An RNA of 207 nucleotides, treated with 2A3 and read out base by base.

[RMDB]
RNA sequence: GGGAACGACUCGAGUAGAGUCGAAAAAGCUUAAAAAGGCUAUAAAAAGCUGUUCAGUUCAGUAGUUGAUUUUACGUCUUAAACUAUUGUAGGACUCAGCAGAACCUCUGAUAAGCAAGAGAGCUUGCUACCUCCAACAAAAUCACAUCUCCAGGCCUCGUACUACCAGUUUCGACUGGUAGUACGAAAAAGAAACAACAACAACAAC
Reactivity to 2A3 in 0.01 (KOAc 150mM, MgCl2 10mM, bicine 150mM(pH8.5), 24C), signal-to-noise 2, nucleotides 027 to 156: a000g030c040u060u060a070a010a080a050a090g030g020c020u030a020u110a100a140a050a030a000g030c000u020g040u090u090c050a050g030u040u020c000a000g020u030a000g010u020u030g030a110u010u080u090u150a100c090g010u010c050u080u130a180a070a050c030u040a030u050u140g050u050a140g010g010a010c010u000c050a000g000c000a010g020a050a060c010c010u030c030u050g100a160u050a180a030g000c020a020a000g020a010g020a000g160c020u050u020g000c010u040a060c010c020u010c010c030a040a050c000a040a150a060a020u050c000a040c010a060u090c030u000c070c000a030g010g020c010c050